[RMDB]
RNA sequence: GGGAACGACUCGAGUAGAGUCGAAAACGGCGUGUGAUCCUAUUAGAGAGCACGUGCGCUUAUACACGGUAAAUUCACCUAAAUUCCACAUCAAACAUGCAAGCAGCUGGUGACCGAGUACCGGCAAGGCUCGUAUCACGUUCGCGUGAUGCGAGCCAAAAGAAACAACAACAACAAC
Reactivity to 2A3 in 0.01 (KOAc 150mM, MgCl2 10mM, bicine 150mM(pH8.5), 24C), signal-to-noise 4, nucleotides 027 to 126: c000g050g000c020g010u010g080u050g040a010u040c000c030u070a210u180u130a090g070a000g010a010g050c010a010c010g040u230g190c000g000c010u140u060a090u040a080c100a000c030g030g030u120a090a130a200u120u090c010a130c050c010u020a070a060a110u090u030c010c010a070c040a080u100c050a020a100a100c030a020u170g070c070a040a030g000c020a060g020c010u040g000g020u050g030a040c000c070g010a030g080u090a060c000c020g010g010c070a060a000
Reactivity to DMS in 0.01 (KOAc 150mM, MgCl2 10mM, bicine 150mM(pH8.5), 24C), signal-to-noise 1, nucleotides 027 to 126: c050g060g070c040g040u000g000u000g010a300u040c020c040u000a250u130u110a300g000a000g000a260g000c080a000c000g010u000g070c100g000c060u000u000a020u000a000c230a050c100g000g000u050a000a080a160u000u000c170a000c080c080u000a070a110a140u000u000c000c000a260c040a070u000c190a130a200a110c100a000u000g000c290a170a230g000c020a080g000c000u000g000g000u010g000a050c060c060g020a100g010u000a020c000c000g000g000c230a000a050